[RMDB]
RNA sequence: GGGAACGACUCGAGUAGAGUCGAAAACGUUCGGUGGUUUAGGUUCUGUACCCAUUCCAUGGCGGCGGGAACGGGUAUAAUCGAAAUCGAAAGAAGCGGACCCCGCGCAGGUGGCUAACCAGAUACGAAGCAGGGUAAUGUUCGCAUUACCCUGCUUAAAAGAAACAACAACAACAAC
Reactivity to DMS in 0.01 (KOAc 150mM, MgCl2 10mM, bicine 150mM(pH8.5), 24C), signal-to-noise 1, nucleotides 027 to 126: c030g020u010u000c020g040g010u000g000g000u010u010u000a100g010g000u010u010c170u050g060u000a020c000c000c030a160u000u010c020c000a120u010g000g000c000g020g010c070g020g000g000a010a020c090g030g000g000u000a000u040a060a050u030c000g000a070a040a010u040c010g000a000a090a160g030a150a080g050c020g000g020a120c040c020c010c030g010c040g030c030a040g000g010u000g030g000c070u030a090a090c090c020a000g000a140u090a040c150g000
Reactivity to 2A3 in 0.01 (KOAc 150mM, MgCl2 10mM, bicine 150mM(pH8.5), 24C), signal-to-noise 2, nucleotides 027 to 126: c050g010u080u060c050g000g020u050g060g140u020u050u130a140g000g000u100u000c000u120g040u080a080c000c000c000a000u040u000c020c000a040u060g130g030c020g020g020c000g000g010g000a000a000c040g050g000g050u010a080u060a010a000u020c030g030a040a000a050u030c020g010a000a130a110g090a030a030g030c000g010g050a080c000c000c000c010g010c000g000c010a010g120g030u020g010g010c010u010a020a020c020c000a000g000a080u080a070c060g030